[RMDB]
RNA sequence: GGGAACGACUCGAGUAGAGUCGAAAAAGGACCACGAGCAGGGCCAAGGUGUCUCCAAGGUGCUGAGGAGCUGAGCGCUCAGCCAGCCCACGGCCACGAUGGUGUGCCGCCGAAGCCACGCGGCUUAACACAAACAAUCGUUCGCGAUUGUUUGUGUAAAAGAAACAACAACAACAAC
Reactivity to 2A3 in 0.01 (KOAc 150mM, MgCl2 10mM, bicine 150mM(pH8.5), 24C), signal-to-noise 1, nucleotides 027 to 126: a010g090g000a040c010c010a030c080g030a030g010c050a070g000g000g000c020c010a030a030g030g010u030g020u030c020u000c060c020a060a030g110g000u090g020c010u040g030a040g000g000a100g000c010u030g080a100g070c030g060c120u130c190a020g040c010c000a000g020c000c020c000a040c040g030g000c070c020a040c030g110a090u120g020g040u060g000u060g080c050c020g000c030c010g050a050a030g000c000c000a060c010g060c000g000g040c000u040u140a050
Reactivity to DMS in 0.01 (KOAc 150mM, MgCl2 10mM, bicine 150mM(pH8.5), 24C), signal-to-noise 2, nucleotides 027 to 126: a080g020g000a160c040c020a100c070g000a130g030c050a120g020g020g020c040c050a060a260g000g020u010g000u000c010u010c030c060a050a110g020g000u000g010c030u000g000a100g030g000a100g010c010u010g000a110g010c060g030c150u010c170a180g010c010c020a030g000c000c010c010a120c020g020g000c040c030a040c070g000a180u010g000g000u000g000u000g020c060c020g010c010c030g000a210a160g000c010c030a080c090g010c070g010g000c030u010u010a150